Background: An RNA of 207 nucleotides, treated with 2A3 and read out base by base.

[RMDB]
RNA sequence: GGGAACGACUCGAGUAGAGUCGAAAAUACCGUCUUCUCCCCGACGGUUUCAAUCCAUAGCUUCACGUUGUGUAGCGUAGGUGGACGGUAUCGUGUGGUGUAUAAACACCACAUAGUCUCUUAGGGGUCAAGCUGAUAAACUUCGGUUUAUCAGCAAGCCCUACGGAUACUUCGGUAUCCGUAGGGCAAAAGAAACAACAACAACAAC
Reactivity to 2A3 in 0.01 (KOAc 150mM, MgCl2 10mM, bicine 150mM(pH8.5), 24C), signal-to-noise 2, nucleotides 027 to 156: u020a010c000c000g000u000c000u170u020c020u070c000c010c000c020g010a080c040g030g000u070u060u110c170a070a030u040c020c030a070u080a080g000c000u040u030c000a030c070g300u300u270g000u060g050u050a030g000c030g040u060a020g000g010u070g000g000a000c000g000g000u020a010u020c020g010u000g020u010g000g000u010g070u020a140u050a300a240a020c010a010c010c000a000c010a000u000a010g000u010c020u010c010u060u130a050g000g030g000g000u090c090a090a050g000c000u000g000a000u000a000a010a000c000u000u040c060g080g000u000u000u000a010u010c010a000g020c000a000a000
Background
High 2A3 reactivity points to a flexible backbone, as in loops and unpaired stretches. Conditions: 150 mM KOAc, 10 mM MgCl2 and 150 mM bicine (pH 8.5), 24 C. Source: RMDB library M2RFPK, as collected in RNAgym. For 2A3 the reverse transcriptase was SuperScript II with manganese.